RNA sequence: GGGAACGACUCGAGUAGAGUCGAAAAUAAUCAAGAUGAAUCGUUUUUAGUUUGCUUGCUUACCUUAUGGGCCAGUAUGAGAUCUACUUGAAUCUUUUUAUGUAGGCAGACAGCGACGGAAUUUAAAACCUCAUAAUGCGUUCGCGCAUUAUGAGGUAAAAGAAACAACAACAACAAC
Reactivity to 2A3 in 0.01 (KOAc 150mM, MgCl2 10mM, bicine 150mM(pH8.5), 24C), signal-to-noise 3, nucleotides 027 to 126: u190a000a040u010c080a050a040g040a110u160g080a050a130u080c010g030u020u000u000u090u130a040g020u020u050u100g000c010u000u000g050c000u090u000a050c010c000u110u030a130u230g000g010g070c000c020a010g000u040a120u070g050a060g000a040u000c010u060a130c070u080u000g050a030a080u030c050u000u050u040u010u000a050u070g010u010a010g040g000c000a000g020a050c000a000g020c020g030a000c000g010g070a040a020u040u060u060a070a120a040
Reactivity to DMS in 0.01 (KOAc 150mM, MgCl2 10mM, bicine 150mM(pH8.5), 24C), signal-to-noise 2, nucleotides 027 to 126: u020a060a180u100c050a120a050g010a110u010g010a080a120u050c030g000u020u000u020u000u000a130g000u000u000u000g000c030u020u000g000c010u000u000a010c010c040u000u040a070u020g000g030g000c110c140a080g010u010a090u000g000a040g000a050u000c070u000a110c300u050u000g030a100a070u000c010u010u000u010u020u000a010u000g000u000a000g030g000c000a030g010a010c000a120g010c250g000a020c040g000g020a070a100u000u020u000a030a010a070

Description
The record gives the reactivity of an RNA of 177 nucleotides to 2A3 and DMS. The RNA was probed in 150 mM KOAc, 10 mM MgCl2 and 150 mM bicine (pH 8.5) at 24 C. The 2A3 profile rests on 2,325 reads. For DMS, 2,331 sequencing reads were counted. In probing experiments dimethyl sulfate is read out at A N1 and C N3, which are open when not base-paired. DMS adducts were read by reverse transcription with MarathonRT.